[RMDB]
RNA sequence: GGGAACGACUCGAGUAGAGUCGAAAAUGGGAGGCGACCGAUUGAAGCCAAUUGCAGACAUCAUGUGUGACUGAGUAUUGGUGUAGGCGAUAGCCUAAAAUCACCCGCCAGCAGAUAAUAUCUGCUGCUCAAGAUGGGAGUUCGCUCCCAUCUUGAGAAAAGAAACAACAACAACAAC
Reactivity to 2A3 in 0.01 (KOAc 150mM, MgCl2 10mM, bicine 150mM(pH8.5), 24C), signal-to-noise 1, nucleotides 027 to 126: u060g010g020g000a010g040g000c000g010a060c020c020g260a230u030u040g080a090a000g000c000c000a000a030u020u050g040c020a000g020a040c000a050u080c080a140u170g140u000g010u020g100a010c010u000g020a020g170u100a060u010u020g080g000u270g000u140a000g060g000c000g030a050u040a000g000c010c010u040a130a060a000a050u090c010a030c010c010c000g040c000c010a000g000c000a000g010a010u090a090a090u100a180u070c000u010g000c020u010g020
Reactivity to DMS in 0.01 (KOAc 150mM, MgCl2 10mM, bicine 150mM(pH8.5), 24C), signal-to-noise 2, nucleotides 027 to 126: u000g000g020g010a050g020g030c010g010a070c140c050g000a080u000u030g000a090a300g000c040c010a010a010u010u030g000c010a000g010a110c030a010u000c040a050u020g010u010g020u010g010a110c020u000g010a040g020u000a010u000u000g010g000u000g010u000a280g000g010c020g000a040u010a160g000c000c030u000a010a050a160a040u010c100a060c030c010c020g010c300c040a010g000c010a010g010a010u000a000a050u000a300u000c000u000g000c000u010g000